[RMDB]
RNA sequence: GGGAACGACUCGAGUAGAGUCGAAAACUUUUUGAUUCUUCGAUGUCGGCUCUUCCUAUCAUUGCGAAGUAGAACUCGCCAAUUGUUGGAUUGUUCACCCACUAAUAGGGAACGUGAGCUGGGUUUACAUUACGGAAAACUUCGGUUUUCCGUAAUGAAAAGAAACAACAACAACAAC
Reactivity to 2A3 in 0.01 (KOAc 150mM, MgCl2 10mM, bicine 150mM(pH8.5), 24C), signal-to-noise 1, nucleotides 027 to 126: c000u190u100u000u000u110g050a050u000u000c010u040u010c000g030a030u240g040u030c000g050g010c030u000c000u100u020c020c000u100a130u100c030a050u090u160g000c020g030a040a020g020u140a040g050a110a060c000u000c010g000c050c010a110a090u060u040g020u000u020g000g040a060u000u050g000u080u030c030a020c000c000c000a040c020u030a020a140u090a230g070g020g080a100a060c100g030u060g050a030g010c080u010g000g030g000u000u010u020a020
Reactivity to DMS in 0.01 (KOAc 150mM, MgCl2 10mM, bicine 150mM(pH8.5), 24C), signal-to-noise 2, nucleotides 027 to 126: c180u000u000u000u000u000g000a020u000u000c010u000u000c050g010a050u020g010u010c020g010g010c110u000c070u010u020c010c010u010a060u000c130a070u010u010g020c010g000a030a050g010u000a110g010a070a260c110u000c030g030c030c240a060a130u000u000g010u000u000g000g010a120u000u000g010u000u010c070a060c000c000c000a060c090u000a040a060u000a120g010g020g010a070a070c120g010u000g010a030g020c100u000g010g000g000u000u010u000a140